[RMDB]
This 207-nucleotide RNA was probed chemically with 2A3 and DMS. 2A3 adducts were read by reverse transcription with SuperScript II with manganese.

RNA sequence: GGGAACGACUCGAGUAGAGUCGAAAAUGGUCCCUCACGCUGUAAUCCCAGCUGUAGAGCACCCGAUGCUGUUGCUGUUCGGGGUGCCACUAUGUAACCCGCACGGACCUAGGGGACUGAACAAAGAGGGGCGAACGCGGGAAUAAAAGACAAGAGACAGCAUUUAAUAUUUCGAUAUUAAAUGCUGAAAAGAAACAACAACAACAAC
Reactivity to 2A3 in 0.01 (KOAc 150mM, MgCl2 10mM, bicine 150mM(pH8.5), 24C), signal-to-noise 4, nucleotides 027 to 156: u080g020g010u020c010c040c010u040c020a110c080g030c020u070g050u150a050a110u150c030c020c000a020g010c050u070g040u060a030g010a020g010c010a010c020c000c020g020a050u100g000c070u080g060u160u090g040c040u090g050u130u060c040g020g030g020g000u010g000c000c020a090c020u090a070u130g120u080a060a090c000c010c000g020c000a030c030g040g070a090c000c020u030a040g000g020g000g020a000c030u090g070a100a020c040a070a090a030g070a050g010g010g030g000c020g040a070a020c070g000c000g020g000g060a020a000u140a020a050a000a010g090a020c080a050a020g080a010g060a090
Reactivity to DMS in 0.01 (KOAc 150mM, MgCl2 10mM, bicine 150mM(pH8.5), 24C), signal-to-noise 3, nucleotides 027 to 156: u000g020g010u000c000c000c010u000c060a140c120g050c040u000g020u020a140a130u000c050c040c010a170g030c030u020g010u000a040g010a160g000c030a060c010c010c000g010a130u000g030c000u000g020u000u000g020c000u000g050u010u010c060g060g000g010g040u010g020c000c020a070c060u010a070u010g060u030a100a140c010c000c000g040c040a220c100g000g010a120c020c020u000a150g000g000g020g010a300c020u000g020a070a120c070a060a060a130g010a110g010g010g010g020c030g030a020a050c060g040c030g020g000g020a080a100u000a040a080a070a180g000a190c070a080a070g000a250g010a220